The record gives the reactivity of an RNA of 177 nucleotides to 2A3. Conditions: 150 mM KOAc, 10 mM MgCl2 and 150 mM bicine (pH 8.5), 24 C. The data come from the RNA Mapping Database (RMDB), library RFM100. 2A3 adducts were read by reverse transcription with SuperScript II with manganese.
RNA sequence: GGGAACGACUCGAGUAGAGUCGAAAAAGUCCGAGCUGUAAACGAUGUCUGCUAGGUGUGGCACAGGCUACGAGCCUGUGCUGUGCCGUAGGGAAGCCGUGAAGCAGACCGCCUGGGAAGUACGUCCGAGCGCAUCGUGUUUCGACACGAUGCGCUCAAAAGAAACAACAACAACAAC
Reactivity to 2A3 in 0.01 (KOAc 150mM, MgCl2 10mM, bicine 150mM(pH8.5), 24C), signal-to-noise 1, nucleotides 027 to 126: a000g020u000c010c000g000a020g000c010u010g080u150a000a020a140c020g050a050u020g040u000c000u000g060c000u000a020g000g000u000g020u050g000g000c000a030c010a000g000g000c000u060a050c240g130a040g000c000c000u000g000u000g000c000u000g000u000g010c000c000g000u010a000g000g000g000a100a000g130c040c030g010u000g110a100a000g090c000a020g040a160c040c000g000c000c000u020g000g040g000a070a060g150u230a050c090g060u000c010c010